Overview:
An RNA of 177 nucleotides, treated with 2A3 and DMS and read out base by base. For 2A3, 50,451 sequencing reads were counted. It was measured as part of the RMDB library OK2TRN. The RNA was probed in 150 mM KOAc, 10 mM MgCl2 and 150 mM bicine (pH 8.5) at 24 C.

RNA sequence: GGGAACGACUCGAGUAGAGUCGAAAAGUGAGCAGCUCGCUGGUGAGGGCCAGGAGCUGUCGUUGCACGGCGGAUUGAUCGAUUCGACCGCAUCCAUCUGGAGCUACUGCCCCAGACCGGACUCGCAAUAAUAAAGUGAAUUCGUUCACUUUAUUAUAAAAGAAACAACAACAACAAC
Reactivity to 2A3 in 0.01 (KOAc 150mM, MgCl2 10mM, bicine 150mM(pH8.5), 24C), signal-to-noise 9, nucleotides 027 to 126: g110u080g020a050g010c000a000g000c010u020c170g290c070u030g010g060u100g150a220g060g270g010c000c010a000g000g010a000g000c000u010g000u010c010g030u020u130g030c060a030c060g030g000c010g010g040a100u020u090g080a130u200c120g030a050u040u020c020g070a130c060c020g000c020a020u000c010c000a010u000c010u010g010g000a020g010c030u200a220c130u300g000c020c010c000c000a000g010a020c050c140g020g000a030c020u010c110g010c060a010
Reactivity to DMS in 0.01 (KOAc 150mM, MgCl2 10mM, bicine 150mM(pH8.5), 24C), signal-to-noise 9, nucleotides 027 to 126: g010u000g010a130g000c010a010g000c000u000c010g020c010u000g010g020u000g010a180g010g000g010c010c010a010g000g000a020g010c000u000g010u000c060g010u000u000g010c070a240c060g000g000c040g010g000a070u000u000g000a110u010c230g000a120u000u000c010g000a120c010c010g010c080a140u000c010c010a290u000c010u000g010g000a030g000c010u010a130c300u010g010c010c010c000c010a020g000a030c120c110g010g000a080c130u000c070g010c110a120